[RMDB]
RNA sequence: GGGAACGACUCGAGUAGAGUCGAAAAUUCCAUUUGAGUAUCCUGAAAACGGGCUUUUCAGCAUGGAACGUACAUAUUAAAUAGUAGGAGUGCAUAGUGGCCCGUAUAUCAGGCAUUAACAUUCCUGAAAACGUGAAAAGGUUCGCCUUUUCACGAACAUUUAGCAAUCCUUCGGGAUUGCUAAAUGAAAAGAAACAACAACAACAAC
Reactivity to 2A3 in 0.01 (KOAc 150mM, MgCl2 10mM, bicine 150mM(pH8.5), 24C), signal-to-noise 3, nucleotides 027 to 156: u070u010c010c010a010u110u040u110g060a060g040u050a070u120c000c000u000g020a020a050a000a020c010g010g010g020c010u090u160u040u060c080a000g000c000a010u020g010g120a140a040c020g080u050a010c040a030u230a080u120u300a200a160a160u120a100g010u020a000g040g060a100g000u010g000c030a040u080a170g120u040g050g000c000c000c000g010u000a010u000a000u000c000a000g000g030c000a000u000u000a030a000c010a030u060u090c000c000u060g070a080a050a050a060c010g000u000g010a000a000a000a000g040g040u070u080c170g150c000c000u000u000u000u000c010a000c000g010a020a000
Reactivity to DMS in 0.01 (KOAc 150mM, MgCl2 10mM, bicine 150mM(pH8.5), 24C), signal-to-noise 2, nucleotides 027 to 156: u000u000c000c020a220u000u000u000g020a170g030u000a120u000c000c000u010g010a030a130a140a130c090g030g010g050c050u000u010u000u000c050a280g040c050a030u000g000g000a130a060c080g010u000a150c050a130u000a150u020u010a030a110a180u000a060g000u010a060g030g000a190g020u000g000c020a120u000a100g030u010g050g030c010c000c010g040u010a030u010a190u000c010a020g020g020c080a060u000u010a120a120c030a090u020u000c000c030u030g010a070a060a120a160c010g030u000g000a020a000a010a040g010g020u000u010c300g020c010c020u000u000u000u010c030a000c020g000a020a080

Structure probing data (2A3 and DMS) for a 207-nucleotide construct. The 2A3 profile rests on 1,986 reads. The data come from the RNA Mapping Database (RMDB), library M2RFPK. The RNA was probed in 150 mM KOAc, 10 mM MgCl2 and 150 mM bicine (pH 8.5) at 24 C. For DMS the reverse transcriptase was MarathonRT.